An RNA of 177 nucleotides, treated with 2A3 and DMS and read out base by base. 2A3 adducts were read by reverse transcription with SuperScript II with manganese. It was measured as part of the RMDB library OK2TST. The 2A3 profile rests on 971 reads. The reactions ran in a buffer of 150 mM KOAc, 10 mM MgCl2 and 150 mM bicine (pH 8.5), at 24 C. For DMS the reverse transcriptase was MarathonRT.
RNA sequence: GGGAACGACUCGAGUAGAGUCGAAAAGGAUGCAUUGAAACAAGGAUUGUUAUAUCCACCUGAUCCAGGUGAAAAAUUUGCAACACUUGGUGGAAAUGUUUCAACAAAUGCUGGUGGAAUGAGAGCAGCAUACGUGGAUCUUCGGAUCCACGUAUGCAAAAGAAACAACAACAACAAC
Reactivity to 2A3 in 0.01 (KOAc 150mM, MgCl2 10mM, bicine 150mM(pH8.5), 24C), signal-to-noise 1, nucleotides 027 to 126: g110g000a030u080g030c030a010u010u070g030a030a010a030c010a060a020g000g010a030u020u050g070u280u140a120u030a040u080c020c020a020c000c040u010g010a040u000c030c000a010g000g000u010g230a040a000a000a040a080u190u250u250g030c060a040a000c010a000c020u000u030g040g010u050g090g000a020a020a020u020g000u010u030u000c010a040a040c010a020a120a020u030g060c010u070g000g170u070g060g100a050a070u150g060a040g000a000g060c060a010
Reactivity to DMS in 0.01 (KOAc 150mM, MgCl2 10mM, bicine 150mM(pH8.5), 24C), signal-to-noise 2, nucleotides 027 to 126: g000g020a080u020g000c030a070u010u000g000a100a030a000c000a100a110g030g020a090u000u000g000u000u000a080u000a050u000c060c000a200c070c010u000g000a140u000c030c020a000g000g030u000g000a010a040a020a100a110u000u000u010g040c100a080a070c200a040c000u000u000g000g030u000g000g010a110a030a040u000g010u000u000u000c000a040a090c130a020a090a060u010g010c040u000g020g020u020g000g000a120a090u000g020a060g000a050g000c050a100